[RMDB]
RNA sequence: GGGAACGACUCGAGUAGAGUCGAAAAAACAGAUUCGUCUGUUAUUUUGGGGUCUAGCGAAAUUCCGCAGAUAUGUGAACUACUCCUGAAGCCUCCACGGGAGCACAUGUAGGAAUUCGCUAGACGGAGGCACCCUAAAUCUGCUUUUCGAAGCAAACUUUUCCGUGCUAUUCGUAGCACGGAAAAGAAAAGAAACAACAACAACAAC
Reactivity to 2A3 in 0.01 (KOAc 150mM, MgCl2 10mM, bicine 150mM(pH8.5), 24C), signal-to-noise 1, nucleotides 027 to 156: a020a020c030a010g010a040u020u220c180g170u000c080u000g100u000u030a300u090u070u030u060g000g010g010g020u000c010u020a000g000c000g020a050a170a220u020u000c030c000g150c280a000g020a060u040a000u050g010u000g020a050a070c060u140a070c030u300c010c000u020g000a020a000g030c000c000u020c010c000a000c020g000g000g000a000g000c000a000c000a000u000g020u020a110g000g030a000a000u010u010c000g010c020u000a000g010a000c000g000g000a000g020g000c000a020c010c000c020u090a050a090a140u060c140u040g010c000u130u140u130u130c150g070a040a010g000c000a020a000a090